RNA sequence: GGGAACGACUCGAGUAGAGUCGAAAAUCGACACAUGGAAGAUUGAUUUUAGGUAAGAUGUAUCUCCAGCUAUUGAACGCGGGAAAGCCUUUCUCUUUCCUGCCCCAAAAACUGAUAUAGUUGGUCACUCGUAUAAGGUGUUCGCACCUUAUACGAGAAAAGAAACAACAACAACAAC
Reactivity to DMS in 0.01 (KOAc 150mM, MgCl2 10mM, bicine 150mM(pH8.5), 24C), signal-to-noise 3, nucleotides 027 to 126: u000c010g000a070c110a110c120a120u000g030g020a100a110g010a070u010u010g020a030u000u000u000u000a060g020g010u010a070a060g010a080u000g000u010a120u040c050u010c020c000a030g000c010u000a060u000u000g010a120a100c220g020c000g000g010g000a010a010a020g000c300c070u010u020u010c110u000c000u000u000u000c000c000u010g000c020c070c020c090a040a060a050a070a060c210u000g010a060u010a020u000a020g010u000u010g020g000u010c160a120
Reactivity to 2A3 in 0.01 (KOAc 150mM, MgCl2 10mM, bicine 150mM(pH8.5), 24C), signal-to-noise 2, nucleotides 027 to 126: u060c010g000a000c010a020c020a150u190g040g060a110a070g030a150u010u040g050a020u060u070u070u100a070g070g010u040a050a080g040a160u090g050u140a120u110c050u010c010c020a010g000c000u000a010u050u100g090a090a010c040g000c020g000g000g020a000a000a000g050c020c000u060u200u000c060u000c000u030u000u000c000c010u020g000c020c000c000c000a050a260a080a050a030c070u040g070a030u050a000u010a080g020u020u020g010g020u030c020a030